[RMDB]
RNA sequence: GGGAACGACUCGAGUAGAGUCGAAAAACAGAACUGGAAUGUGGACCAAAUACUUCUAGCAUCCCCAUUUCAAAUAACUAUACUCUUGGACAAAUUUUGGUUUGACUUUGAAAAAAUAAUUUUUAGGCAUCUGCAUUCAAUUCGUUGAAUGCAGAUGAAAAGAAACAACAACAACAAC
Reactivity to DMS in 0.01 (KOAc 150mM, MgCl2 10mM, bicine 150mM(pH8.5), 24C), signal-to-noise 1, nucleotides 027 to 126: a030c090a060g010a270a130c040u000g000g010a040a050u000g030u000g000g030a110c080c080a050a030a140u000a050c100u010u000c080u000a040g030c090a110u000c000c050c010c030a140u000u000u000c060a040a130a080u000a040a130c080u000a100u030a090c090u000c090u000u000g010g010a180c050a090a030a110u010u000u000u010g000g030u000u000u000g010a110c140u010u010u010g000a000a000a190a110a080a080u000a040a080u040u000u000u010u000a140g000g000